[RMDB]
Conditions: 150 mM KOAc, 10 mM MgCl2 and 150 mM bicine (pH 8.5), 24 C. This 207-nucleotide RNA was probed chemically with DMS and 2A3. 2A3 adducts were read by reverse transcription with SuperScript II with manganese. For 2A3, 1,469 sequencing reads were counted. Source: RMDB library M2RFPK, as collected in RNAgym. High DMS reactivity at an A or C suggests that its Watson-Crick edge is free.
RNA sequence: GGGAACGACUCGAGUAGAGUCGAAAAACCGGAGGCCGACAAUCCAGGGAACCGGAUGUCAUCACGUUGUUGCAGUACCAGAUGGCAUCUUAAAUCCGAUCUGCAAAUAAGCAUGUAGAAAGCUAAUAAAAUCACACACACUUCGGUGUGUGUGAAAGAUUAUAGCACUCUUCGGAGUGCUAUAAUCAAAAGAAACAACAACAACAAC
Reactivity to DMS in 0.01 (KOAc 150mM, MgCl2 10mM, bicine 150mM(pH8.5), 24C), signal-to-noise 2, nucleotides 027 to 156: a080c020c030g010g010a060g030g010c060c050g050a070c070a120a140u000c050c040a050g030g010g030a040a140c080c070g020g030a020u020g030u000c010a020u000c020a300c180g020u010u010g040u000u010g010c020a100g050u000a040c050c050a170g000a020u010g000g010c000a050u010c020u010u000a050a070a150u000c020c020g000a130u000c030u020g010c040a040a060a110u000a070a110g000c050a090u000g040u000a110g000a020a120a080g000c030u000a070a100u010a030a070a090a160u010c010a050c010a020c000a000c000a000c030u000u000c290g060g050u020g020u000g020u000g020u000g000a000a010a060
Reactivity to 2A3 in 0.01 (KOAc 150mM, MgCl2 10mM, bicine 150mM(pH8.5), 24C), signal-to-noise 2, nucleotides 027 to 156: a000c010c000g000g020a030g010g030c080c030g070a030c100a070a050u040c030c060a060g000g040g000a050a050c040c010g030g000a020u000g010u020c010a010u020c020a000c080g060u050u050g030u080u050g020c080a050g060u080a070c060c010a050g000a030u010g000g000c000a020u000c020u030u070a080a110a020u000c010c010g030a090u030c010u060g000c030a060a060a090u130a150a050g050c050a040u120g000u060a060g110a120a090a010g000c040u070a050a050u120a120a210a040a030u050c000a000c000a000c000a000c000a000c000u040u060c150g050g010u000g000u010g000u000g010u000g000a000a000a000